[RMDB]
RNA sequence: GGGAACGACUCGAGUAGAGUCGAAAAACCCUCGCCCGAUGUUCGCUGAUUCGUCAGCCACAUGCCCAGGUGGCCGCGAUCUUCAAGGCUACGGCGCGGAUAGGUCCGCGCUGAUCGUUUUCCUCCAACCGCAUAACCGGCUUCGGCCGGUUAUGAACCUAUAUCGUGACUUCGGUCACGAUAUAGGAAAAGAAACAACAACAACAAC
Reactivity to 2A3 in 0.01 (KOAc 150mM, MgCl2 10mM, bicine 150mM(pH8.5), 24C), signal-to-noise 1, nucleotides 027 to 156: a000c020c000c020u020c060g030c030c020c010g070a090u080g030u100u130c020g010c020u000g030a060u050u050c190g080u030c070a030g000c030c020a020c010a020u120g030c010c030c030a050g000g030u010g000g000c000c000g060c050g040a020u010c010u060u030c030a030a000g020g000c010u020a000c020g000g000c000g000c000g010g000a050u110a240g160g180u000c010c000g000c000g030c020u010g000a010u000c020g020u060u060u160u120c020c030u040c030c030a080a190c030c030g070c040a000u000a000a000c000c000g020g020c000u030u040c060g100g000c000c000g010g000u000u000a000u000g000a000a000